[RMDB]
RNA sequence: GGGAACGACUCGAGUAGAGUCGAAAACUGGAUUCUUUCGAGAAUCCAGCAUGUCUAGUCGCAAGCGAACGAUCAACGCUAGCGACUAGACUUUAUUGAUCGCAUUUGCCUCUUUCGAGAGGCAAAACUUCACUCUGUCAUUCGUGACAGAGUGAAGAAAAGAAACAACAACAACAAC
Reactivity to 2A3 in 0.01 (KOAc 150mM, MgCl2 10mM, bicine 150mM(pH8.5), 24C), signal-to-noise 1, nucleotides 027 to 126: c000u000g010g000a000u000u000c000u000u080u120c110g080a030g000a010a000u000c000c000a000g000c000a030u060g000u000c010u020a010g010u010c000g000c000a010a010g010c030g040a110a040c030g070a170u170c070a100a000c000g000c010u010a020g010c040g000a000c000u000a010g000a000c000u000u030u010a050u000u090g060a050u160c110g060c160a110u050u000u020g010c000c000u040c000u030u010u200c300g070a020g000a000g090g000c000a020a000a010a000
Reactivity to DMS in 0.01 (KOAc 150mM, MgCl2 10mM, bicine 150mM(pH8.5), 24C), signal-to-noise 3, nucleotides 027 to 126: c010u000g000g020a010u000u000c000u000u000u010c160g000a020g030a010a000u000c000c000a000g010c120a050u000g010u000c010u010a000g040u000c010g010c000a100a020g020c000g000a090a100c130g010a120u010c170a090a030c010g000c000u010a090g020c000g020a000c000u010a000g000a000c000u000u000u010a060u000u000g000a080u000c060g020c250a140u000u000u000g010c000c000u000c000u000u010u010c180g010a010g010a010g000g000c000a000a000a030a090

Conditions: 150 mM KOAc, 10 mM MgCl2 and 150 mM bicine (pH 8.5), 24 C. The record gives the reactivity of an RNA of 177 nucleotides to 2A3 and DMS. For DMS the reverse transcriptase was MarathonRT. For 2A3, 1,465 sequencing reads were counted. For 2A3 the reverse transcriptase was SuperScript II with manganese.